[RMDB]
RNA sequence: GGGAACGACUCGAGUAGAGUCGAAAAGAAGAUGUGUUCGCACAUCUUCAAAAGCAACGACUAGGACCGGCGAGACAAAGGAGCGAUAGCUAAUCGCGACGAAAACAGGCCUCUUCGGAGGCCUGAACUAACUUCUGGAGUUCGCUCCAGAAGUUAGAAAAGAAACAACAACAACAAC
Reactivity to DMS in 0.01 (KOAc 150mM, MgCl2 10mM, bicine 150mM(pH8.5), 24C), signal-to-noise 2, nucleotides 027 to 126: g020a030a000g020a000u000g010u000g010u000u030c160g020c000a010c000a000u000c000u000u010c010a060a070a100a120g020c070a030a080c120g000a070c050u000a040g000g000a040c020c020g020g000c070g000a080g020a080c110a030a120a100g010g000a160g000c050g010a060u000a110g000c180u010a100a250u010c010g010c070g000a100c070g020a110a050a140a130c010a030g020g000c000c000u000c000u000u010c130g010g000a010g000g000c000c000u000g000a010a070
Reactivity to 2A3 in 0.01 (KOAc 150mM, MgCl2 10mM, bicine 150mM(pH8.5), 24C), signal-to-noise 1, nucleotides 027 to 126: g000a020a010g000a000u000g020u010g000u060u140c180g040c070a000c000a000u000c000u000u030c000a020a020a000a000g030c020a060a050c030g060a020c020u060a030g040g020a010c000c020g020g000c020g060a040g030a050c020a030a140a030g030g010a060g050c000g020a030u020a040g100c090u170a110a060u040c000g010c020g020a040c000g090a060a050a020a050c010a010g020g000c010c000u020c000u050u080c190g080g000a010g000g000c020c000u000g010a000a000
This 177-nucleotide RNA was probed chemically with DMS and 2A3. The DMS profile rests on 1,305 reads. The reactions ran in a buffer of 150 mM KOAc, 10 mM MgCl2 and 150 mM bicine (pH 8.5), at 24 C. The 2A3 profile rests on 1,390 reads. Values cover nucleotides 27 to 126. DMS (dimethyl sulfate) methylates the pairing face of unpaired adenines and cytosines. It was measured as part of the RMDB library M2PK50.